Structure probing data (2A3 and DMS) for a 177-nucleotide construct. The 2A3 profile rests on 15,448 reads. It was measured as part of the RMDB library OK1LIB. Reactivities are rounded to 0.1 and cut off at 0 and 3. The RNA was probed in 150 mM KOAc, 10 mM MgCl2 and 150 mM bicine (pH 8.5) at 24 C. For DMS, 7,695 sequencing reads were counted.

RNA sequence: GGGAACGACUCGAGUAGAGUCGAAAAGCACGUCGUUACGACGACGUGCAAGAAAACAAAAGGAGUGGCGAAGGCUGGCCACAGUGAAUCAAACAGCCUAAAAGCAUGGUGGUACGCCACCAUGCAAAAUCAUACCAGUGUUCGCACUGGUAUGAUUAAAAGAAACAACAACAACAAC
Reactivity to 2A3 in 0.01 (KOAc 150mM, MgCl2 10mM, bicine 150mM(pH8.5), 24C), signal-to-noise 6, nucleotides 027 to 126: g000c010a000c010g010u000c010g010u030u080a090c300g020a000c000g010a000c010g080u000g000c000a000a000g010a000a060a010a000c130a010a080a050a050g230g060a180g020u010g000g020c040g120a120a010g010g000c000u000g000g000c000c000a000c010a010g040u070g060a020a020u100c050a050a020a060c000a020g000c010c000u030a050a080a000a010g000c000a000u000g010g010u010g020g000u030a030c280g040c020c000a000c000c000a000u000g010c000a000a000
Reactivity to DMS in 0.01 (KOAc 150mM, MgCl2 10mM, bicine 150mM(pH8.5), 24C), signal-to-noise 3, nucleotides 027 to 126: g000c000a000c010g000u000c000g020u000u010a080c190g030a060c040g010a000c000g020u000g010c000a020a060g020a110a040a150a120c260a030a070a120a150g010g020a140g020u000g000g000c000g000a110a020g000g010c000u000g000g000c000c000a020c020a150g000u050g010a100a060u050c180a030a040a070c000a010g000c000c010u010a030a040a130a080g020c010a000u000g010g020u000g000g030u000a100c200g000c010c010a000c000c000a000u000g010c000a030a010